Chemical mapping of a 177-nucleotide RNA with 2A3 and DMS. The 2A3 profile rests on 2,969 reads.
RNA sequence: GGGAACGACUCGAGUAGAGUCGAAAAGAGCCGGCACCGACGCGUGACGACCUCGUCGACCAGAUCGAGGACGUGCGGGAGGCUGCCUCGUCGGGCCGUCAGUCGACGAUCGGCGACGUCGCAGUGCUCAGUAGCCGAGGUUCGCCUCGGCUACUGAAAAAGAAACAACAACAACAAC
Reactivity to 2A3 in 0.01 (KOAc 150mM, MgCl2 10mM, bicine 150mM(pH8.5), 24C), signal-to-noise 4, nucleotides 027 to 126: g050a020g060c010c020g010g020c020a040c030c020g070a070c010g030c030g060u070g190a050c010g020a040c020c010u000c000g010u010c000g040a110c060c100a120g000a090u270c080g010a040g010g020a010c030g040u050g010c000g010g050g000a050g090g010c040u070g050c000c000u020c000g020u010c000g000g060g090c110c000g010u020c010a070g070u140c090g000a020c020g010a050u040c000g040g010c020g030a090c040g010u020c000g000c060a030g020u040g060c000
Reactivity to DMS in 0.01 (KOAc 150mM, MgCl2 10mM, bicine 150mM(pH8.5), 24C), signal-to-noise 2, nucleotides 027 to 126: g010a040g000c080c010g020g000c010a040c010c030g020a050c070g030c080g000u000g020a060c020g010a190c040c030u000c010g010u000c010g000a160c080c280a140g000a060u040c080g020a060g030g000a120c000g040u030g000c060g020g000g000a200g040g000c050u000g000c000c050u000c010g000u020c000g020g020g040c030c000g000u020c040a200g010u030c050g000a010c000g020a020u010c010g020g000c010g000a040c020g000u000c070g010c100a170g020u030g040c000
The reactions ran in a buffer of 150 mM KOAc, 10 mM MgCl2 and 150 mM bicine (pH 8.5), at 24 C. It was measured as part of the RMDB library OK1LIB.